[RMDB]
This 177-nucleotide RNA was probed chemically with 2A3 and DMS. It was measured as part of the RMDB library OK1LIB. The reactions ran in a buffer of 150 mM KOAc, 10 mM MgCl2 and 150 mM bicine (pH 8.5), at 24 C. Values cover nucleotides 27 to 126.
RNA sequence: GGGAACGACUCGAGUAGAGUCGAAAAGCAGCCUGGUAGACAUGCAGGAGAGUCUCGUCCUUUUUUGCGGCCGUGUGCAGCAGCGUGCGGAGCUGCUGGAGGAGUGCAACCUGUUCCUCGGGGCGGACCAGCCUGGUAUGUUCGCAUACCAGGCUGGAAAAGAAACAACAACAACAAC
Reactivity to 2A3 in 0.01 (KOAc 150mM, MgCl2 10mM, bicine 150mM(pH8.5), 24C), signal-to-noise 3, nucleotides 027 to 126: g050c010a010g000c000c000u020g000g000u030a030g010a100c060a080u090g030c010a010g020g010a040g030a000g070u000c040u080c160g080u040c030c040u100u100u030u020u160u160g040c010g010g020c020c010g030u070g020u050g000c050a200g060c010a010g030c050g030u050g010c060g120g000a130g060c000u020g000c000u000g040g000a020g000g000a040g000u110g030c060a150a140c020c040u050g050u040u010c000c000u000c010g020g010g000g000c000g000g020a000
Reactivity to DMS in 0.01 (KOAc 150mM, MgCl2 10mM, bicine 150mM(pH8.5), 24C), signal-to-noise 1, nucleotides 027 to 126: g030c100a030g020c000c020u000g020g000u000a080g000a080c050a040u030g040c000a120g000g000a110g000a060g010u000c000u000c100g000u000c020c020u000u010u000u000u040u000g000c000g080g060c020c040g040u030g010u000g070c030a180g010c140a040g100c010g020u060g010c080g000g010a300g020c030u000g000c060u000g010g000a030g060g000a030g060u020g000c130a160a110c220c180u010g000u000u000c050c000u000c040g020g000g000g000c000g000g000a130